Overview: The record gives the reactivity of an RNA of 177 nucleotides to DMS and 2A3. In probing experiments dimethyl sulfate is read out at A N1 and C N3, which are open when not base-paired.
RNA sequence: GGGAACGACUCGAGUAGAGUCGAAAAGAAUACUUUUAGUACAAGCGAGUACACGCAGUAUACUGCCACUUGUGUGAGAAUACUUUUAGUACAGGGGAGUACACGCAGUAUACUGCCACUUGUGUGACACAGCUAGUACCUUCGGGUACUAGCUGUGAAAAGAAACAACAACAACAAC
Reactivity to DMS in 0.01 (KOAc 150mM, MgCl2 10mM, bicine 150mM(pH8.5), 24C), signal-to-noise 2, nucleotides 027 to 126: g030a150a080u040a040c010u010u000u030u000a090g020u030a060c060a040a100g000c050g040a160g000u000a050c110a060c300g050c010a000g050u000a000u000a000c000u050g000c000c120a140c050u000u040g070u070g020u000g000a180g000a140a140u000a000c110u000u030u000u070a110g000u000a040c070a120g040g010g000g000a020g030u020a020c040a040c150g000c010a000g000u000a010u000a030c000u020g020c020c050a020c000u010u000g000u000g000u010g020a220
Reactivity to 2A3 in 0.01 (KOAc 150mM, MgCl2 10mM, bicine 150mM(pH8.5), 24C), signal-to-noise 3, nucleotides 027 to 126: g080a060a060u210a160c070u050u070u080u090a090g030u060a070c010a030a050g040c050g100a020g060u110a040c080a010c070g000c010a000g010u010a000u000a000c000u020g000c000c040a080c100u130u080g040u020g040u040g120a090g180a060a050u200a170c000u070u130u090u180a060g050u030a070c020a020g060g010g000g050a120g050u090a070c070a020c130g000c000a000g000u000a000u000a010c010u000g010c000c000a000c000u010u000g010u000g050u060g050a000
The 2A3 profile rests on 2,382 reads. Conditions: 150 mM KOAc, 10 mM MgCl2 and 150 mM bicine (pH 8.5), 24 C. For DMS, 2,129 sequencing reads were counted.